An RNA of 207 nucleotides, treated with DMS and 2A3 and read out base by base.
2A3 is a SHAPE reagent: it acylates the 2'-hydroxyl of flexible nucleotides of all four kinds.
Reactivities are given for positions 27 through 156.
Conditions: 150 mM KOAc, 10 mM MgCl2 and 150 mM bicine (pH 8.5), 24 C.
[RMDB]
RNA sequence: GGGAACGACUCGAGUAGAGUCGAAAACGCAAAGCUGCAGCGCGGCGCUCUGGAGGCCUUGCCCCGCGCACUGCUCUUUACAUGGCCCGACGAGAGGGCACUUCGCGGGCAGUGCUGCGGCCUCGUGAAACUGCCCCUAAGUUCGCUUAGGGGCAAAACACUUAAAUUUAUUCGUAAAUUUAAGUGUAAAAGAAACAACAACAACAAC
Reactivity to DMS in 0.01 (KOAc 150mM, MgCl2 10mM, bicine 150mM(pH8.5), 24C), signal-to-noise 2, nucleotides 027 to 156: c070g000c000a080a030a090g020c030u010g020c000a080g000c080g010c090g030g000c030g010c060u000c080u010g020g000a150g030g000c020c030u000u000g030c060c060c030c010g010c090g010c030a040c020u000g030c010u010c020u000u000u020a080c030a070u000g000g000c010c010c030g020a300c100g010a210g000a210g000g000g020c000a020c020u000u000c030g020c220g000g020g030c010a060g020u000g020c020u000g040c020g000g040c030c020u000c090g060u010g010a110a050a070c090u000g020c000c000c010c000u010a040a060g010u000u000c300g000c010u000u000a010g000g010g010g050c010a000a000a020
Reactivity to 2A3 in 0.01 (KOAc 150mM, MgCl2 10mM, bicine 150mM(pH8.5), 24C), signal-to-noise 2, nucleotides 027 to 156: c060g020c020a070a070a040g020c020u090g030c040a050g050c020g010c020g060g010c040g020c060u030c040u140g140g050a060g020g010c010c010u050u070g030c030c030c000c000g000c000g020c010a000c000u000g000c000u000c010u070u140u040a090c060a100u100g100g010c010c020c010g040a080c060g020a040g040a040g040g010g010c030a040c010u070u100c050g010c030g000g010g020c010a020g000u040g000c030u020g000c000g000g000c000c000u040c000g000u000g010a100a090a000c050u040g010c000c000c000c000u010a010a000g020u040u100c180g030c100u000u000a000g000g000g000g000c000a000a000a000